[RMDB]
RNA sequence: GGGAACGACUCGAGUAGAGUCGAAAACUAGCCUAUUCAGCAUUGCGCUCUUGAGGCCCGGCGAAACGCGGUUCGUCUGCUGAGGAUGCCUCCGCUAGUCGAGCGGACUUGGUCUCUUCCGCCCAAAGCCCUUUUUCUUUCAACUGAGCUUGUUCCAGCUAAACAUGUUGUUCGCAACAUGUUUAGCAAAAGAAACAACAACAACAAC
Reactivity to 2A3 in 0.01 (KOAc 150mM, MgCl2 10mM, bicine 150mM(pH8.5), 24C), signal-to-noise 4, nucleotides 027 to 156: c080u050a030g050c000c010u130a130u140u180c080a050g000c040a060u050u250g020c060g000c070u040c030u090u130g080a070g000g050c000c010c010g040g000c050g050a140a060a030c150g010c060g130g000u060u050c020g030u030c070u040g040c020u020g020a020g050g030a060u100g040c000c010u030c010c010g000c010u050a060g110u150c070g080a000g010c000g000g010a040c040u110u130g030g020u000c020u000c000u070u020c020c000g020c000c010c010a060a040a040g010c020c000c000u020u050u000u050u040c040u020u150u090c050a070a050c030u050g010a020g030c050u050u030g050u060u030c000c030a010